[RMDB]
RNA sequence: GGGAACGACUCGAGUAGAGUCGAAAAUCCUAAGUCUAAGCAAACAGAAUUGAUGACCUAUAUGGGAGGAUCGGAAACGAUCCUUUGAUCAUAUAGCAAGAUUCUGGUAGCUUAGAUAUGGAAAACGAGGGCUAAGGCUUCGGCCUUAGCCCUCGAACAAGUAUACCAGUUUCGACUGGUAUACUUGAAAAGAAACAACAACAACAAC
Reactivity to 2A3 in 0.01 (KOAc 150mM, MgCl2 10mM, bicine 150mM(pH8.5), 24C), signal-to-noise 2, nucleotides 027 to 156: u030c030c000u020a130a030g010u020c000u000a000a000g000c020a050a240a180c020a000g020a000a010u050u050g100a120u140g030a240c020c010u000a000u000a000u000g020g010g000a010g000g000a000u000c010g020g090a080a020a100c000g000a010u010c000c000u030u030u050g000a000u000c010a000u010a000u000a010g020c030a120a160g000a000u010u000c000u010g020g000u010a020g000c000u000u000a000g000a000u000a020u010g010g010a030a080a020a080c030g010a000g020g010g000c030u000a010a000g070g000c030u090u120c290g000g000c000c020u010u000a000g010c010c000c000u000c000g000a000a020
Reactivity to DMS in 0.01 (KOAc 150mM, MgCl2 10mM, bicine 150mM(pH8.5), 24C), signal-to-noise 1, nucleotides 027 to 156: u010c020c000u010a120a230g030u010c000u000a000a020g020c000a080a170a300c000a030g000a010a050u000u030g000a150u000g000a100c300c010u000a030u000a010u010g030g000g000a010g010g010a020u010c000g000g000a170a120a300c000g010a000u000c000c000u000u000u000g010a080u030c010a010u030a010u000a030g000c020a030a300g000a010u000u000c000u030g000g000u000a300g050c020u000u010a010g010a010u000a110u000g000g010a100a050a070a120c040g030a060g020g040g040c000u040a040a130g000g000c010u000u000c190g040g000c010c000u000u000a000g020c010c000c000u010c000g000a010a100